Chemical mapping of a 207-nucleotide RNA with 2A3 and DMS. Values cover nucleotides 27 to 156. Conditions: 150 mM KOAc, 10 mM MgCl2 and 150 mM bicine (pH 8.5), 24 C. High 2A3 reactivity points to a flexible backbone, as in loops and unpaired stretches. Reactivities are rounded to 0.1 and cut off at 0 and 3. For 2A3 the reverse transcriptase was SuperScript II with manganese.

RNA sequence: GGGAACGACUCGAGUAGAGUCGAAAACGUGUCCGUCGGCGUAGCAGACAACAUGCCCAGGUAGCCCAGACCUUCAAGGCUACGGUGCGUUGCGACGCACGGUCUGAUUCUUCACAACGACGUUCACAAGAUCGGAUCACUUUCGAGUGAUCCGAAACGAGUGAUAGGGAUUCGUCCCUAUCACUCGAAAAGAAACAACAACAACAAC
Reactivity to 2A3 in 0.01 (KOAc 150mM, MgCl2 10mM, bicine 150mM(pH8.5), 24C), signal-to-noise 5, nucleotides 027 to 156: c060g000u020g000u000c010c010g000u000c000g040g020c100g030u050a020g030c020a010g030a030c030a090a040c030a170u130g020c000c010c000a020g050g000u030a020g020c000c010c040a080g050a150c040c030u140u150c100a090a070g000g020c000u020a020c050g020g010u010g000c000g010u030u140g080c090g060a010c000g010c000a000c000g000g010u000c000u000g020a080u140u030c050u110u120c080a030c020a160a050c020g030a000c020g020u030u040c030a010c020a060a060g050a160u020c000g000g000a000u000c000a000c000u060u070u110c230g020a000g000u000g000a000u000c000c000g000a000a000a000
Reactivity to DMS in 0.01 (KOAc 150mM, MgCl2 10mM, bicine 150mM(pH8.5), 24C), signal-to-noise 2, nucleotides 027 to 156: c050g020u000g000u000c080c040g010u000c000g020g000c050g000u000a060g030c010a040g010a060c020a090a080c060a110u010g030c030c000c060a100g040g020u010a050g040c010c000c070a250g000a060c090c050u010u000c110a020a130g010g000c000u000a160c060g040g000u000g030c000g010u020u000g060c160g020a190c060g050c010a070c020g050g030u000c000u020g010a200u000u000c060u000u000c010a070c000a070a110c020g020a060c010g020u000u000c010a070c030a030a090g000a190u020c000g020g000a030u010c000a020c000u000u010u000c190g000a010g020u000g010a020u000c010c000g020a000a020a100